[RMDB]
RNA sequence: GGGAACGACUCGAGUAGAGUCGAAAAAGCCAGAUAGGGAGGGCCUGCUGACUUUCACAGUGGUGGGAAAAGCUGUGUGAACAUGUGGGUACACAGGCACCCAUGCAUACACAAAUAGAACAUCCACUGAAAAUACAAAACACAGCCCAGACUGUAAGCCAUUAGUAGCAUUCGUGCUACUAAUGGCAAAAGAAACAACAACAACAAC
Reactivity to 2A3 in 0.01 (KOAc 150mM, MgCl2 10mM, bicine 150mM(pH8.5), 24C), signal-to-noise 1, nucleotides 027 to 156: a000g030c010c000a050g100a060u100a090g000g010g020a030g000g020g040c150c000u010g040c020u120g050a140c020u160u090u030c150a060c000a020g000u020g040g050u070g020g020g040a060a240a000a000g040c100u010g000u000g000u020g010a080a010c000a140u280g050u080g030g000g000u070a010c020a000c020a000g110g020c000a140c000c000c000a000u150g030c020a040u010a030c000a000c000a010a190a010u180a070g000a060a000c000a030u050c000c000a050c020u020g040a000a000a000a270u120a080c150a000a010a030a070c160a000c000a000g150c010c000c000a050g070a050c020u060g020u250a040a000